[RMDB]
RNA sequence: GGGAACGACUCGAGUAGAGUCGAAAAGAAGUGGCAGGGACAUGCCCCACAAGCUCGUUCUAGCAACAUAUGUUUGGCUAGUUCGAGCGAUUAGUCUAGAGGAGCGUCCUCUCGCCUAUUUACGAGACGAGUAAUAGCACUUCGGUGCUAUUACUCGAAAAGAAACAACAACAACAAC
Reactivity to DMS in 0.01 (KOAc 150mM, MgCl2 10mM, bicine 150mM(pH8.5), 24C), signal-to-noise 2, nucleotides 027 to 126: g010a060a050g010u020g020g000c000a050g010g000g000a030c020a060u030g000c000c010c030c020a040c170a140a220g000c000u000c000g010u000u000c000u000a000g000c000a060a030c040a170u090a080u040g000u000u020u050g030g000c000u000a000g010u010u000c000g010a000g000c000g000a020u030u010a080g000u040c140u080a200g000a160g000g010a150g000c060g000u000c020c020u000c010u010c130g020c010c000u000a090u020u000u000a020c060g020a080g010a270
Reactivity to 2A3 in 0.01 (KOAc 150mM, MgCl2 10mM, bicine 150mM(pH8.5), 24C), signal-to-noise 4, nucleotides 027 to 126: g110a070a030g040u010g000g000c020a000g010g000g000a020c060a060u220g050c030c000c030c000a060c020a040a000g020c000u000c000g000u000u000c000u000a010g010c000a010a070c060a070u300a040u300g140u110u150u070g160g050c000u000a000g010u000u000c000g010a000g000c000g000a010u000u050a040g050u000c070u060a070g000a140g030g050a150g040c010g020u000c000c000u040c010u000c030g000c010c010u020a090u030u060u060a070c090g030a010g010a080